[RMDB]
RNA sequence: GGGAACGACUCGAGUAGAGUCGAAAAGGGUUUACAGAGUUACUUACCCCAGAAGUUGCCCUGGACGCUCAACAACAGAUCAAACAGUUUUAUCUGGCUUGCAUUGAACCCACAAGCACAGAAAUGCACAUAGUAAGGCAUUCGUGCCUUACUAUGUAAAAGAAACAACAACAACAAC
Reactivity to 2A3 in 0.01 (KOAc 150mM, MgCl2 10mM, bicine 150mM(pH8.5), 24C), signal-to-noise 9, nucleotides 027 to 126: g020g010g000u030u020u020a060c050a020g090a010g080u070u060a030c020u040u100a110c010c010c010c010a040g030a150a020g060u060u070g020c000c000c000u000g010g000a020c020g010c020u060c030a020a100c010a030a020c010a060g070a110u110c070a050a060a100c050a110g020u010u020u060u090a120u030c000u000g000g000c010u000u010g010c020a090u020u130g070a040a040c000c010c000a010c000a000a010g010c030a030c010a300g040a020a040a020u090g010c040
Reactivity to DMS in 0.01 (KOAc 150mM, MgCl2 10mM, bicine 150mM(pH8.5), 24C), signal-to-noise 7, nucleotides 027 to 126: g000g000g000u000u010u010a110c090a100g010a150g000u000u010a030c060u010u010a130c050c000c010c040a120g010a080a110g020u010u000g010c030c010c010u000g010g000a120c160g000c010u010c030a060a080c130a070a080c100a060g000a060u010c130a080a080a100c130a050g020u030u020u020u010a070u020c000u010g000g000c000u000u000g000c080a060u040u010g000a060a060c020c010c000a230c030a020a010g020c000a080c030a020g010a030a100a110u010g020c160